The record gives the reactivity of an RNA of 170 nucleotides to 2A3 and DMS.
For 2A3, 67,463 sequencing reads were counted.
Source: RMDB library 15KLIB, as collected in RNAgym.
RNA sequence: GGGAACGACUCGAGUAGAGUCGAAAAUCAUCCUGAGAUCGGGGAGCCUCGACGAUCUCUUUGAUCUCCUGAAGGAGGAAGGAGCUCUCGAGCGCUCUCCCGCCCCUCGGAUGGGCCGCUUCCGGCGAAACGCUAGACUUCGGUCUAGCGAAAAGAAACAACAACAACAAC
Reactivity to 2A3 in 0.01 (KOAc 150mM, MgCl2 10mM, bicine 150mM(pH8.5), 24C), signal-to-noise 9, nucleotides 027 to 129: u070c010a010u010c000c050u170g020a020g010a050u080c010g000g000g000g000a000g000c000c000u000c000g020a040c160g010a010u010c000u000c010u020u020u040g160a160u050c000u050c010c020u180g220a300a140g020g000a010g000g010a000a010g010g000a000g000c000u000c000u000c000g000a000g000c160g000c010u000c030u050c010c000c000g000c000c010c000c000u000c000g000g000a010u010g000g040g000c020c000g030c070u090u040c040c000g020g010c020g030a060a080a010
Reactivity to DMS in 0.01 (KOAc 150mM, MgCl2 10mM, bicine 150mM(pH8.5), 24C), signal-to-noise 7, nucleotides 027 to 129: u050c020a000u020c000c000u050g000a020g010a120u090c000g030g000g030g000a020g040c010c010u010c000g000a010c210g020a040u020c000u000c000u020u000u020g060a130u030c020u040c000c000u000g080a230a140g010g000a020g000g040a000a010g040g000a020g020c100u020c010u000c020g000a020g000c160g010c000u000c010u010c020c000c030g020c000c090c070c040u030c020g000g000a020u040g000g030g000c060c020g030c080u060u040c020c020g010g010c040g000a020a020a020